Notes: Structure probing data (2A3 and DMS) for a 177-nucleotide construct. It was measured as part of the RMDB libraries RFM100 and RFMREP. The reactions ran in a buffer of 150 mM KOAc, 10 mM MgCl2 and 150 mM bicine (pH 8.5), at 24 C.

RNA sequence: GGGAACGACUCGAGUAGAGUCGAAAACGGGAAUACGAAAGAAAAGGGAGAAUAAACGUCUUACUUAUAGAACAGUGAAGAAUGCCACAAUUUUACGCUUUGAAAAUGAUGACACUAUCACAGUUGGACUCGACCUAUACUUCGGUAUAGGUCGAGUAAAAGAAACAACAACAACAAC
Reactivity to 2A3 in 0.01 (KOAc 150mM, MgCl2 10mM, bicine 150mM(pH8.5), 24C), signal-to-noise 2, nucleotides 027 to 126: c020g010g000g110a150a000u240a030c160g050a020a080a040g080a000a140a050a010g030g020g060a080g100a020a290u170a060a000a070c100g020u000c050u000u020a110c020u050u060a040u020a150g020a030a000c060a010g020u030g000a000a100g050a070a120u100g040c040c000a030c000a050a000u000u000u000u120a170c130g000c100u090u000u250g050a100a000a000a000u140g080a010u040g000a000c030a000c110u080a020u060c000a090c000a180g000u040u000g000g020
Reactivity to DMS in 0.01 (KOAc 150mM, MgCl2 10mM, bicine 150mM(pH8.5), 24C), signal-to-noise 2, nucleotides 027 to 126: c060g010g020g030a170a090u030a080c100g030a020a130a050g000a000a070a080a030g000g000g000a010g010a040a040u050a010a060a120c070g010u000c010u000u000a040c010u000u000a210u010a150g000a060a080c080a120g020u000g000a020a010g000a020a020u020g000c000c050a070c150a010a060u010u000u020u000a130c120g000c100u010u000u000g000a020a050a030a050u020g080a090u000g000a050c010a030c050u000a060u020c020a010c040a070g010u020u000g010g030